[RMDB]
RNA sequence: GGGAACGACUCGAGUAGAGUCGAAAAAUAAGCUGCGUCUCUGAGAUUGCGCUCCGCCCACUCACCCAGAUCAUCAUGACACAAAAAACUAAUCUGUCUUGAUUAUUUACAGUUAGUUUACCUGUCCGACGACAAACUACUUCGGUAGUUUGUCGUCAAAAGAAACAACAACAACAAC
Reactivity to 2A3 in 0.01 (KOAc 150mM, MgCl2 10mM, bicine 150mM(pH8.5), 24C), signal-to-noise 1, nucleotides 027 to 126: a000u170a060a080g050c080u110g010c040g000u020c010u000c040u050g000a050g010a300u080u160g020c000g000c000u090c010c000g040c000c060c000a050c020u030c010a070c000c010c000a040g040a140u110c010a040u090c030a030u260g030a020c000a000c060a010a300a000a000a000a000c050u090a000a050u130c040u070g080u000c090u050u250g150a210u180u220a160u150u160u030a020c010a000g000u010u000a000g000u010u070u000a040c000c010u000g020u040c140c020
Structure probing data (2A3) for a 177-nucleotide construct. The reactions ran in a buffer of 150 mM KOAc, 10 mM MgCl2 and 150 mM bicine (pH 8.5), at 24 C.